[RMDB]
An RNA of 177 nucleotides, treated with 2A3 and DMS and read out base by base. The 2A3 profile rests on 4,098 reads. The DMS profile rests on 3,382 reads. The reactions ran in a buffer of 150 mM KOAc, 10 mM MgCl2 and 150 mM bicine (pH 8.5), at 24 C.
RNA sequence: GGGAACGACUCGAGUAGAGUCGAAAAGAUAUGGAGCCGAUGAACUACAGCCCUUGAUCGGAAACGAUCAUGUGUAGGAUAGGCUGCAUCCGGCUCCUAAGUCAAAAGGAAGCCUUCGGGCUUCCAAUCUUCUACUCUAGUUCGCUAGAGUAGAAGAAAAAGAAACAACAACAACAAC
Reactivity to 2A3 in 0.01 (KOAc 150mM, MgCl2 10mM, bicine 150mM(pH8.5), 24C), signal-to-noise 3, nucleotides 027 to 126: g000a000u030a010u090g000g000a020g000c000c020g030a020u040g050a120a140c110u240a190c300a100g010c050c010c030u000u020g000a010u000c000g000g030a020a000a010c010g000a020u020c030a020u040g260u070g240u220a100g170g180a130u140a100g060g000c000u030g000c010a010u080c220c130g010g000c030u030c010c010u010a010a000g010u000c010a130a070a000a000g010g000a000a000g000c000c010u120u160c300g160g040g000c000u000u000c000c010a000a010
Reactivity to DMS in 0.01 (KOAc 150mM, MgCl2 10mM, bicine 150mM(pH8.5), 24C), signal-to-noise 3, nucleotides 027 to 126: g000a080u020a300u000g010g010a030g030c000c000g010a130u010g000a140a110c170u000a160c040a040g010c020c020c010u010u010g000a010u000c000g030g000a120a060a160c010g010a000u000c000a010u010g000u010g010u010a110g030g010a200u010a150g000g000c020u000g000c010a010u000c100c040g060g010c020u010c000c000u000a010a130g000u010c050a120a080a120a140g010g000a040a010g010c000c000u000u000c290g040g020g010c000u010u000c000c000a030a050